RNA sequence: GGGAACGACUCGAGUAGAGUCGAAAAUCGGAGAGUUCUUAGGUGGGGGUGUACUGGCUUCGACAGGGCGGGCAAAGGUGCGCAGGCAACUCGUCAGGCGAUCGACGUUAAUGAAGCAAAUCUCCAACUAGGGCUUAAAAUUCGUUUUAAGCCCUAGAAAAGAAACAACAACAACAAC
Reactivity to DMS in 0.01 (KOAc 150mM, MgCl2 10mM, bicine 150mM(pH8.5), 24C), signal-to-noise 3, nucleotides 027 to 126: u030c090g020g000a050g010a280g030u010u010c030u010u000a140g020g010u000g000g000g000g000g000u000g010u000a130c060u010g000g020c060u010u010c070g050a120c150a120g000g000g010c100g000g000g000c040a050a060a110g020g010u010g000c010g000c090a040g000g020c060a040a090c080u020c030g000u000c010a030g030g020c020g000a050u000c060g010a030c000g010u000u040a050a050u020g000a050a190g010c050a070a070a110u020c080u000c040c060a070a190
Reactivity to 2A3 in 0.01 (KOAc 150mM, MgCl2 10mM, bicine 150mM(pH8.5), 24C), signal-to-noise 3, nucleotides 027 to 126: u080c020g040g000a040g010a030g060u160u080c070u060u130a050g020g010u080g040g000g020g010g000u110g000u060a140c100u070g060g000c040u000u080c020g040a040c020a070g020g010g060c090g000g060g000c030a100a100a040g060g010u060g010c040g020c010a000g010g010c000a000a030c060u000c010g060u030c020a010g030g060c020g040a040u030c000g000a020c020g050u080u110a030a070u220g040a030a000g010c020a040a040a040u080c080u020c030c010a020a060